[RMDB]
RNA sequence: GGGAACGACUCGAGUAGAGUCGAAAAUAGAGCGCCCUGGUCUUUUGGGUGCUCGCAGCUCACAGUUGACGAGGUGAGCAGCGGGGAAGUGGAAAACCGACGUUCAGCUUGUCAGAAGCGAAAAUCACUCAUCAGGCUGCUUCGGCAGCCUGAUGAGAAAAGAAACAACAACAACAAC
Reactivity to 2A3 in 0.01 (KOAc 150mM, MgCl2 10mM, bicine 150mM(pH8.5), 24C), signal-to-noise 1, nucleotides 027 to 126: u300a010g030a000g000c000g010c000c000c000u020g120g000u060c240u230u300u280u100g000g000g000u000g000c000u000c000g070c000a010g010c000u030c000a150c020a110g000u040u220g000a050c000g000a010g080g050u020g000a000g000c010a000g020c040g010g000g050g000a220a000g140u300g040g160a010a220a000a000c000c000g050a010c020g030u070u100c010a020g010c050u000u100g000u000c000a060g030a130a000g020c120g090a100a000a000a000u010c010a010